[RMDB]
RNA sequence: GGGAACGACUCGAGUAGAGUCGAAAACUGUCGGAUGAGGCAAGCUAUGCGCACCGCGGCGGCCUGGUUGGAGUUGCCUUCCACCGCCACGCGCAGCUCGCUGAUGUAGGGGUGUAGGUUGAUGACCGAGGUCAGCAUGUGUGCGGCGCAUUCCGCGGCCGCAUCAUACAUUCGUGUAUGAUGCGGCAAAAGAAACAACAACAACAAC
Reactivity to 2A3 in 0.01 (KOAc 150mM, MgCl2 10mM, bicine 150mM(pH8.5), 24C), signal-to-noise 3, nucleotides 027 to 156: c050u030g060u090c030g050g020a110u060g030a090g040g010c070a090a020g000c020u090a050u170g000c040g000c010a060c050c070g100c070g030g000c010g000g010c010c080u020g010g010u010u030g030g050a240g040u160u130g160c010c000u020u000c030c000a000c000c010g030c000c010a010c010g000c010g000c020a030g010c020u060c060g000c010u060g010a090u060g040u080a040g010g030g010g020u040g010u030a060g060g020u070u120g080a080u110g040a080c000c080g050a080g020g010u020c030a020g000c040a040u080g030u020g030u060g050c030g020g000c020g000c030a020u120u030c040c020g010c010g060
Reactivity to DMS in 0.01 (KOAc 150mM, MgCl2 10mM, bicine 150mM(pH8.5), 24C), signal-to-noise 2, nucleotides 027 to 156: c020u000g000u010c010g010g020a090u010g020a250g030g010c040a050a060g030c030u000a080u010g030c000g040c030a070c050c050g110c020g010g030c010g020g020c020c100u010g030g040u010u010g020g020a300g020u000u000g020c030c020u010u010c060c020a060c010c010g060c000c010a000c030g040c020g030c020a050g030c020u000c080g040c000u020g040a140u000g030u010a100g020g020g000g040u000g090u050a000g010g020u000u000g020a100u010g000a110c030c020g000a130g030g010u000c000a080g050c020a070u020g040u000g000u010g010c040g020g020c040g040c050a240u000u000c000c000g010c110g000